[RMDB]
RNA sequence: GGGAACGACUCGAGUAGAGUCGAAAAGAUAUGGACCACCAGUGGAGGUUGAGGUCGGAAACGACCUCAAGACCUAUGAAGCUGAGUGGUCCUAAGUCAAAACGGUCUUCCGUUCGCGGAAGACCGACGAAUUUAUGGUGUUCGCACCAUAAAUUCGAAAAGAAACAACAACAACAAC
Reactivity to 2A3 in 0.01 (KOAc 150mM, MgCl2 10mM, bicine 150mM(pH8.5), 24C), signal-to-noise 2, nucleotides 027 to 126: g000a000u020a000u050g000g000a000c000c000a010c000c000a000g000u010g040g100a050g000g020u030u030g010a010g000g000u000c000g020g000a000a000a000c010g000a000c000c000u000c000a000a020g000a010c000c000u290a300u300g000a000a020g000c010u020g070a130g060u000g000g000u000c010c000u000a000a010g000u000c010a010a000a010a030c020g000g000u000c000u000u000c010c010g040u080u120c300g000c010g090g000a000a020g010a000c000c000g000a000
Reactivity to DMS in 0.01 (KOAc 150mM, MgCl2 10mM, bicine 150mM(pH8.5), 24C), signal-to-noise 3, nucleotides 027 to 126: g000a030u000a030u010g000g020a010c000c000a000c010c000a000g020u000g010g000a010g070g020u000u010g010a020g000g020u000c010g020g000a010a000a030c010g000a000c000c000u000c000a000a030g020a080c000c000u010a300u000g000a150a210g010c000u000g000a150g020u000g020g020u000c000c000u000a010a050g010u010c020a120a050a110a250c030g000g010u000c010u000u000c000c000g000u010u010c240g010c010g010g000a030a000g000a000c010c000g010a020
Chemical mapping of a 177-nucleotide RNA with 2A3 and DMS. It was measured as part of the RMDB library TTRDES. The reactions ran in a buffer of 150 mM KOAc, 10 mM MgCl2 and 150 mM bicine (pH 8.5), at 24 C. For 2A3, 5,954 sequencing reads were counted.